An RNA of 177 nucleotides, treated with DMS and 2A3 and read out base by base. For 2A3 the reverse transcriptase was SuperScript II with manganese. The data come from the RNA Mapping Database (RMDB), library M2PK90. Conditions: 150 mM KOAc, 10 mM MgCl2 and 150 mM bicine (pH 8.5), 24 C. The DMS profile rests on 6,230 reads. Reactivities are given for positions 27 through 126.
RNA sequence: GGGAACGACUCGAGUAGAGUCGAAAAGCUCAGUGUGUGUCGCCCCGUGGUCUAGUGCUGGUUCUAGGGCUGGGGCGUCAGCAUCCAGGUCUGACGGGACGGGCAGUAUCUCGCCAUCAACGAUAAAUAGAUGCUAAUGUUUCGACAUUAGCAUCUAAAAAGAAACAACAACAACAAC
Reactivity to DMS in 0.01 (KOAc 150mM, MgCl2 10mM, bicine 150mM(pH8.5), 24C), signal-to-noise 4, nucleotides 027 to 126: g030c020u000c040a120g010u000g010u010g010u000g020u000c030g000c010c000c000c020g030u000g010g010u000c010u000a020g000u000g020c100u010g000g000u010u000c010u000a040g010g000g000c010u000g010g000g000g010c020g010u010c010a080g010c020a040u000c070c070a090g010g010u000c020u010g010a090c060g000g010g010a050c090g010g000g010c070a070g020u000a080u000c030u000c060g020c030c030a050u000c120a050a080c090g010a090u010a030a060a150
Reactivity to 2A3 in 0.01 (KOAc 150mM, MgCl2 10mM, bicine 150mM(pH8.5), 24C), signal-to-noise 2, nucleotides 027 to 126: g020c020u040c080a050g010u030g010u030g030u010g030u070c000g000c000c010c010c020g090u040g040g280u000c000u000a010g010u010g100c100u140g110g060u100u020c010u010a010g000g080g030c040u010g000g000g000g000c010g010u010c000a010g020c000a020u000c040c040a010g020g030u030c020u050g050a070c020g010g000g030a010c010g020g050g000c020a010g000u080a050u070c070u050c030g050c050c020a100u050c050a050a080c040g030a020u090a070a120a000